This 177-nucleotide RNA was probed chemically with DMS and 2A3. DMS adducts were read by reverse transcription with MarathonRT. Source: RMDB library TTRDES, as collected in RNAgym. For 2A3 the reverse transcriptase was SuperScript II with manganese.
RNA sequence: GGGAACGACUCGAGUAGAGUCGAAAAGAUAUGGAUCGGUCGACAGGGAGAAGCCCUAUCGGAAACGAUAGGUCUUCAUCGAUCUGUCGAGCCGAUCCUAAGUCAAACAGCCACUUCGGUGGCUGAAGUGAUGUACUUAGUUCGCUAAGUACAUCACAAAAGAAACAACAACAACAAC
Reactivity to DMS in 0.01 (KOAc 150mM, MgCl2 10mM, bicine 150mM(pH8.5), 24C), signal-to-noise 7, nucleotides 027 to 126: g010a060u000a300u010g000g000a000u000c010g020g010u000c010g010a020c000a010g010g000g000a030g010a030a010g000c150c000c000u000a010u010c000g010g000a140a100a210c000g010a020u000a000g000g000u000c000u000u000c020a220u000c200g000a040u010c010u000g000u000c000g000a050g020c000c000g000a010u000c000c000u000a010a100g010u010c040a120a150a300c010a020g000c000c000a010c000u000u010c240g040g010u000g010g010c000u000g010a020a090
Reactivity to 2A3 in 0.01 (KOAc 150mM, MgCl2 10mM, bicine 150mM(pH8.5), 24C), signal-to-noise 4, nucleotides 027 to 126: g030a000u070a030u190g000g000a000u010c010g000g030u020c000g000a010c000a000g020g000g010a070g000a010a000g000c000c000c010u000a000u000c000g030g030a110a020a030c010g000a000u000a000g000g010u010c000u010u000c000a050u070c010g020a040u010c010u000g000u000c000g010a020g010c000c010g000a000u000c000c000u000a010a000g000u000c010a060a070a150c000a010g000c000c000a030c010u090u150c300g160g000u010g000g000c000u000g000a040a010